About this RNA
An RNA of 177 nucleotides, treated with DMS and 2A3 and read out base by base. The reactions ran in a buffer of 150 mM KOAc, 10 mM MgCl2 and 150 mM bicine (pH 8.5), at 24 C. The 2A3 profile rests on 2,548 reads.
[RMDB]
RNA sequence: GGGAACGACUCGAGUAGAGUCGAAAAAUCUUGCUCAGCUGUGCACAGAGGCAGCUCUGAACUGCAUUCGUGAGAAGAUGGACCUGAUCGACCUGGAGGACGAAACGAUCGACGCGGAGGUUUUGGACUUUCUACGCAAUUUCGAUUGCGUAGAAAGAAAAGAAACAACAACAACAAC
Reactivity to DMS in 0.01 (KOAc 150mM, MgCl2 10mM, bicine 150mM(pH8.5), 24C), signal-to-noise 4, nucleotides 027 to 126: a030u000c020u000u010g020c030u000c020a070g000c080u000g020u000g010c020a100c020a030g010a020g010g000c300a100g030c010u010c020u000g010a160a140c220u000g000c010a060u010u010c150g030u000g010a040g000a040a030g010a030u010g010g020a190c040c030u000g020a050u010c070g000a070c060c030u000g000g010a100g020g040a060c070g000a050a110a050c100g010a050u000c060g030a070c090g010c060g000g020a080g010g010u000u000u000u000g000g020a290
Reactivity to 2A3 in 0.01 (KOAc 150mM, MgCl2 10mM, bicine 150mM(pH8.5), 24C), signal-to-noise 2, nucleotides 027 to 126: a000u010c020u020u110g090c000u000c010a100g060c080u080g010u030g060c020a020c000a050g030a010g100g000c080a090g030c040u000c020u030g120a200a110c090u030g000c000a010u080u090c080g060u050g020a030g020a010a010g000a010u040g010g020a060c000c020u040g050a090u080c020g060a080c000c010u060g100g010a070g010g050a020c000g060a060a030a030c030g030a080u050c030g040a020c060g010c060g030g050a050g070g000u030u040u040u090g050g000a020